[RMDB]
RNA sequence: GGGAACGACUCGAGUAGAGUCGAAAAAGAACAUCGCCGCAAGCCAAUGCGCAAGCCAGAGUAAAUCAGAUUUGGAAAAGACCCAGACAUGUUUGUCCAUGUUUGAGCCCAACUCUACCGUGGUGCCUGUCAGCAGUUUAUUCGUAAACUGCUGACAAAAAGAAACAACAACAACAAC
Reactivity to 2A3 in 0.01 (KOAc 150mM, MgCl2 10mM, bicine 150mM(pH8.5), 24C), signal-to-noise 1, nucleotides 027 to 126: a000g010a050a040c020a050u030c030g100c080c000g000c010a000a000g000c030c000a140a080u120g000c020g010c010a000a000g010c080c000a010g000a020g080u100a060a040a190u040c050a000g010a100u070u030u110g050g020a010a040a070a040g040a040c000c090c000a000g060a020c000a000u100g030u180u250u220g130u100c010c030a020u020g010u030u020u000g090a020g030c030c040c000a030a030c000u030c020u010a020c010c050g050u050g090g000u040g080c080c020
Reactivity to DMS in 0.01 (KOAc 150mM, MgCl2 10mM, bicine 150mM(pH8.5), 24C), signal-to-noise 2, nucleotides 027 to 126: a090g000a060a090c000a050u010c090g000c080c020g000c050a050a080g010c070c130a100a120u000g000c070g040c040a090a150g020c020c080a040g000a070g000u000a030a070a110u010c080a050g010a090u000u000u000g000g010a070a030a070a170g000a060c010c050c010a050g010a020c040a020u010g000u020u010u010g000u010c210c010a010u000g010u000u000u000g000a070g000c030c010c020a020a040c050u000c000u000a060c040c030g030u000g000g010u000g000c050c040